Description:
Structure probing data (2A3 and DMS) for a 177-nucleotide construct. Values are in units of 0.01, from 0 to 300, in steps of 10. The DMS profile rests on 2,030 reads. High DMS reactivity at an A or C suggests that its Watson-Crick edge is free. The RNA was probed in 150 mM KOAc, 10 mM MgCl2 and 150 mM bicine (pH 8.5) at 24 C. Source: RMDB library OK2TST, as collected in RNAgym.
RNA sequence: GGGAACGACUCGAGUAGAGUCGAAAAGCGCAUGACGGACGAACCACCAGUGCCAAUCGUAUAGCUAUAGCCGGUGCCAACCGCACCAUCGCUGUCGGUAAUGGUGACGAUGGGGGUUUCCUGGCUACCCGAUUUAUUACUUCGGUAAUAAAUCGGGAAAAGAAACAACAACAACAAC
Reactivity to 2A3 in 0.01 (KOAc 150mM, MgCl2 10mM, bicine 150mM(pH8.5), 24C), signal-to-noise 3, nucleotides 027 to 126: g060c050g000c060a080u130g080a090c050g010g020a010c020g020a030a000c020c000a010c010c020a030g020u010g010c030c000a020a040u080c060g050u240a050u070a160g000c040u040a040u100a190g080c060c020g000g040u050g000c030c040a070a020c060c030g060c020a050c020c020a040u050c020g000c030u010g050u090c070g050g000u140a170a110u140g020g010u040g030a030c030g030a060u050g000g000g000g000g000u010u060u060c000c020u050g060g000c000u040a070
Reactivity to DMS in 0.01 (KOAc 150mM, MgCl2 10mM, bicine 150mM(pH8.5), 24C), signal-to-noise 3, nucleotides 027 to 126: g000c050g040c090a070u010g010a110c090g010g010a090c070g020a030a130c080c030a020c040c040a090g020u000g020c000c040a080a040u000c100g010u000a090u000a110g040c050u010a140u000a040g010c150c090g000g020u010g030c110c160a060a070c140c030g000c060a100c000c000a020u000c090g020c020u000g020u000c050g010g010u000a100a070u000g010g010u000g000a060c020g010a060u010g000g010g000g000g030u010u000u010c040c000u000g000g000c030u010a100